This 177-nucleotide RNA was probed chemically with 2A3 and DMS. The DMS profile rests on 9,922 reads. Conditions: 150 mM KOAc, 10 mM MgCl2 and 150 mM bicine (pH 8.5), 24 C.
RNA sequence: GGGAACGACUCGAGUAGAGUCGAAAAUCUUCAUCGGACUCGUGAUAGUCCUCGGAGGCUGCGGAUGGGGAGCGUGCUGGCUCUGGCGGUGCACUAACAUGGGACGAGACUGUCGCCGUGCGCGGCGGUGUCUAUCAGAGUUCGCUCUGAUAGACACAAAAGAAACAACAACAACAAC
Reactivity to 2A3 in 0.01 (KOAc 150mM, MgCl2 10mM, bicine 150mM(pH8.5), 24C), signal-to-noise 5, nucleotides 027 to 126: u040c010u170u120c050a100u110c060g030g030a030c010u020c040g100u090g100a160u080a090g020u010c020c000u010c040g050g000a030g050g000c030u050g020c050g070g060a120u100g050g010g010g040a040g040c050g000u060g010c030u040g050g000c010u010c030u070g060g000c050g030g020u040g040c030a020c070u070a100a020c020a090u090g010g020g040a010c020g010a020g050a050c040u080g030u070c020g000c030c000g090u070g030c140g000c010g020g000c010g030
Reactivity to DMS in 0.01 (KOAc 150mM, MgCl2 10mM, bicine 150mM(pH8.5), 24C), signal-to-noise 6, nucleotides 027 to 126: u000c040u000u000c060a130u010c120g000g010a050c020u000c060g010u010g010a150u000a050g010u000c020c010u010c160g010g010a090g010g010c070u000g030c070g000g020a110u010g010g010g010g000a070g020c060g010u010g020c050u000g010g010c040u010c060u000g010g010c050g010g020u000g010c080a050c060u010a060a090c110a060u000g010g000g010a110c040g000a120g000a080c100u000g010u000c020g010c010c030g020u000g020c130g020c030g010g000c030g010